[RMDB]
RNA sequence: GGGAACGACUCGAGUAGAGUCGAAAAGCGCUCGGUCUCUCCUCGUGGUGCUGGCCUGCCCUCCGUGAGCCAGAGAAACAGGACUGGUUUGGGGGUCUCCCAUCCGAACAGCCACGGGAGACCACGGAGAAAGCGGUAAAUUCGUUUACCGCUUUCUAAAAGAAACAACAACAACAAC
Reactivity to 2A3 in 0.01 (KOAc 150mM, MgCl2 10mM, bicine 150mM(pH8.5), 24C), signal-to-noise 6, nucleotides 027 to 126: g040c050g030c040u050c090g020g020u020c020u000c010u010c050c010u060c050g040u050g010g030u070g030c090u040g030g010c010c030u020g010c010c010c000u010c000c010g090u090g060a030g010c010c000a010g020a010g040a040a210a040c060a070g060g100a070c000u030g030g030u070u070u150g060g010g000g020g030u000c020u010c000c000c000a040u080c060c030g070a060a060c040a070g030c020c020a040c040g000g000g000a000g000a000c000c000a020c010g020g000
Reactivity to DMS in 0.01 (KOAc 150mM, MgCl2 10mM, bicine 150mM(pH8.5), 24C), signal-to-noise 5, nucleotides 027 to 126: g020c040g000c040u000c040g000g010u000c040u010c050u010c030c100u030c050g040u000g010g000u000g000c060u010g010g000c050c030u000g010c060c040c020u010c010c090g020u030g010a100g000c000c020a030g000a110g000a140a110a100c220a100g000g020a150c020u010g000g000u000u000u010g010g010g010g010g000u000c040u020c030c000c000a120u010c090c070g010a070a110c120a190g030c050c050a060c110g000g000g000a010g010a020c020c020a040c090g010g010